[RMDB]
Structure probing data (2A3 and DMS) for a 177-nucleotide construct. 2A3 adducts were read by reverse transcription with SuperScript II with manganese. In probing experiments dimethyl sulfate is read out at A N1 and C N3, which are open when not base-paired. Conditions: 150 mM KOAc, 10 mM MgCl2 and 150 mM bicine (pH 8.5), 24 C.
RNA sequence: GGGAACGACUCGAGUAGAGUCGAAAAUAUAUCAUUGCAGCCAUGCGUACCUUCAUUGCCUCCGGUGAUCCGUGUCCCGGGUACUGUUGCUGCGGAUGCUGGGAUGCGGCAUGUAGGGCAGCGGCUGAGAGGUCCAUAUAUUCGUAUAUGGACCUCUAAAAGAAACAACAACAACAAC
Reactivity to 2A3 in 0.01 (KOAc 150mM, MgCl2 10mM, bicine 150mM(pH8.5), 24C), signal-to-noise 5, nucleotides 027 to 126: u280a010u100a050u150c100a110u090u220g020c010a010g010c020c000a090u220g020c030g070u200a140c000c040u010u040c010a030u010u300g010c000c010u080c020c040g050g010u080g230a050u010c000c000g020u010g040u030c010c030c000g050g040g010u100a060c060u090g100u150u170g040c070u070g010c010g000g000a030u070g020c000u020g000g030g050a090u150g100c010g010g000c040a020u050g030u070a020g020g030g000c050a010g000c000g010g000c010u010g000
Reactivity to DMS in 0.01 (KOAc 150mM, MgCl2 10mM, bicine 150mM(pH8.5), 24C), signal-to-noise 3, nucleotides 027 to 126: u050a040u020a050u030c060a120u030u030g020c000a010g010c010c010a080u050g020c020g010u040a180c010c000u000u000c010a030u020u080g000c010c020u020c040c030g010g010u000g000a040u000c010c000g010u010g010u020c000c010c000g000g010g040u010a010c080u000g030u000u000g020c090u020g000c010g000g020a020u000g010c000u000g010g030g000a110u010g040c080g000g020c080a020u010g000u010a030g000g010g000c070a260g020c040g000g000c010u000g010